[RMDB]
Source: RMDB library 15KLIB, as collected in RNAgym. An RNA of 170 nucleotides, treated with 2A3 and DMS and read out base by base.
RNA sequence: GGGAACGACUCGAGUAGAGUCGAAAACUCAUGUGGCUUCUAAUGAUGCAAUAAUGACUCGUUGUUUAGCUAUUCAUUCUUGUUUUAUAGAACGUGUGGAUUGGGAUAUAGAGUAUCCUUAUAUCUCUGAGGUUUGUCUUCGGACAAACCAAAAGAAACAACAACAACAAC
Reactivity to 2A3 in 0.01 (KOAc 150mM, MgCl2 10mM, bicine 150mM(pH8.5), 24C), signal-to-noise 3, nucleotides 027 to 129: c020u010c000a030u070g060u120g090g020c070u000u040c020u050a160a210u220g080a020u040g000c010a020a030u040a050a020u030g020a040c020u020c060g080u050u100g070u150u240u280a000g000c000u000a010u010u000c010a050u000u000c010u080u000g010u000u050u030u040a060u000a070g030a040a010c050g100u040g050u070g090g020a070u050u140g020g000g030a000u000a000u020a110g150a020g150u060a030u030c010c000u000u070a000u020a050u030c020u000c080u030g020a080
Reactivity to DMS in 0.01 (KOAc 150mM, MgCl2 10mM, bicine 150mM(pH8.5), 24C), signal-to-noise 3, nucleotides 027 to 129: c000u010c010a030u060g060u170g020g010c070u000u030c040u130a120a070u040g010a040u030g030c050a100a040u040a100a140u030g000a050c160u000c120g020u020u040g020u010u050u040a050g040c050u010a030u040u030c070a050u020u030c040u020u040g020u050u060u050u020a090u050a010g030a040a010c110g030u030g070u010g020g000a020u010u020g000g000g000a030u030a040u020a090g020a140g050u040a040u050c080c070u000u040a040u040a080u060c040u020c040u050g010a160

The reactions ran in a buffer of 150 mM KOAc, 10 mM MgCl2 and 150 mM bicine (pH 8.5), at 24 C.